[RMDB]
RNA sequence: GGGAACGACUCGAGUAGAGUCGAAAACUACCAUCCAGCAGUACUCCAAGACAUUUUAUGUGCUGCCGCUUCGUGGCAAGCUUUCCUUUUGGGAAGCUGGUACGACUAAGGCUGGCUACCCAUAUAACUAGUGGGAGUAGUUCGCUACUCCCACUAGAAAAGAAACAACAACAACAAC
Reactivity to DMS in 0.01 (KOAc 150mM, MgCl2 10mM, bicine 150mM(pH8.5), 24C), signal-to-noise 2, nucleotides 027 to 126: c090u010a160c010c010a060u010c050c070a100g010c010a060g010u000a060c050u010c160c160a080a080g010a080c160a100u000u000u010u010a090u010g020u010g010c040u010g020c000c070g020c160u000u030c080g020u000g010g000c060a050a060g020c010u000u000u000c000c000u000u000u000u020g010g000g000a040a000g010c000u000g010g010u000a010c030g010a080c300u010a100a110g010g000c020u020g030g020c080u010a090c040c030c010a090u000a050u010a070a180
Reactivity to 2A3 in 0.01 (KOAc 150mM, MgCl2 10mM, bicine 150mM(pH8.5), 24C), signal-to-noise 1, nucleotides 027 to 126: c040u040a030c040c020a000u030c020c020a020g000c000a000g050u020a030c000u070c060c020a070a010g110a060c040a120u060u130u120u170a080u140g020u010g030c050u010g000c000c020g000c050u050u080c010g050u070g060g050c050a070a010g040c000u000u040u040c010c000u180u260u190u200g000g020g000a000a000g020c000u000g050g060u000a030c030g020a020c050u130a140a000g020g000c030u020g020g020c010u050a050c000c000c030a040u150a000u010a150a090